[RMDB]
RNA sequence: GGGAACGACUCGAGUAGAGUCGAAAAGAAGAGAAGUGAGUAAACGCCUAUGCGGUAUAAGCACAGCCCGUCAAAAGGCGUGCGGCGAGGGCACCAGACGCUGUGCUUAUAACUGGGCCCUCGAAGAAAUGCCGCGUAUAUUCGUAUACGCGGCAUUAAAAGAAACAACAACAACAAC
Reactivity to 2A3 in 0.01 (KOAc 150mM, MgCl2 10mM, bicine 150mM(pH8.5), 24C), signal-to-noise 2, nucleotides 027 to 126: g190a050a000g120a000g020a070a040g100u140g070a000g030u150a080a060a050c010g000c000c010u090a110u300g040c000g060g000u020a100u000a050a000g000c000a000c020a030g000c000c020c050g050u060c050a110a040a060a000g010g000c000g010u010g010c000g050g010c020g000a000g000g000g000c160a210c090c000a000g010a060c020g020c060u030g000u020g010c000u030u100a110u030a070a030c020u000g000g000g000c000c000c000u000c000g000a000a000g000a030
Reactivity to DMS in 0.01 (KOAc 150mM, MgCl2 10mM, bicine 150mM(pH8.5), 24C), signal-to-noise 3, nucleotides 027 to 126: g020a080a060g000a080g000a070a120g010u020g000a070g010u010a080a030a050c040g030c060c030u030a120u080g010c020g000g000u000a050u010a050a030g010c010a020c020a040g000c000c000c000g030u010c300a070a050a040a100g000g020c010g000u000g000c140g000g010c030g030a020g000g020g000c000a130c010c000a010g010a180c140g020c030u000g020u000g010c010u000u000a050u030a040a120c000u000g000g000g000c000c000c000u010c040g000a020a080g000a050

The record gives the reactivity of an RNA of 177 nucleotides to 2A3 and DMS.
The data come from the RNA Mapping Database (RMDB), library OK1LIB.
The 2A3 profile rests on 1,581 reads.
For 2A3 the reverse transcriptase was SuperScript II with manganese.